An RNA of 207 nucleotides, treated with 2A3 and DMS and read out base by base. High DMS reactivity at an A or C suggests that its Watson-Crick edge is free. It was measured as part of the RMDB library OK3TST. The 2A3 profile rests on 3,839 reads. The DMS profile rests on 5,976 reads. For 2A3 the reverse transcriptase was SuperScript II with manganese.
[RMDB]
RNA sequence: GGGAACGACUCGAGUAGAGUCGAAAAGACAAGUGACACUGUAGCUUCCUUCCAGACUGGGAGAUCUAGCCUGGUGUCCCCAUGCCCUAGUCAUAAAAACAGCCUGAGGAGGAGGGGGCGCUGUACAAGGGAGGUUAAUCUAUGCAGGGGCCCUAGGUCAUGUGAUAGAUUUCGAUCUAUCACAUGAAAAAGAAACAACAACAACAAC
Reactivity to 2A3 in 0.01 (KOAc 150mM, MgCl2 10mM, bicine 150mM(pH8.5), 24C), signal-to-noise 4, nucleotides 027 to 156: g090a020c080a060a040g050u040g060a010c010a000c020u050g040u150a020g020c010u050u020c000c000u000u030c010c010a100g030a290c160u140g020g030g010a050g020a050u020c050u090a010g030c010c060u070g030g010u030g020u000c020c000c000c010a040u120g010c000c000c000u040a050g040u060c040a040u170a100a120a010a030a030c030a010g020c000c020u060g030a060g030g020a020g000g010a020g020g000g010g010g020c020g020c040u030g020u070a050c040a090a040g030g000g000a030g000g000u040u080a050a050u050c090u100a060u140g010c030a020g000g000g010g020c010c000c000u030a050g030g060
Reactivity to DMS in 0.01 (KOAc 150mM, MgCl2 10mM, bicine 150mM(pH8.5), 24C), signal-to-noise 2, nucleotides 027 to 156: g010a120c070a080a090g020u000g010a060c020a060c030u000g000u000a130g030c030u000u000c020c010u000u000c000c020a100g010a140c120u010g010g020g010a050g000a050u000c030u000a040g020c010c010u000g030g020u000g010u000c000c020c020c030a080u000g020c010c020c020u000a110g010u020c070a100u010a060a100a090a090a090c040a100g000c030c020u000g000a120g010g000a150g020g010a080g000g000g030g030g040c020g000c040u000g000u000a070c040a070a120g010g000g020a070g010g010u000u000a050a120u000c040u000a060u000g020c040a080g000g000g040g020c010c030c000u010a080g020g020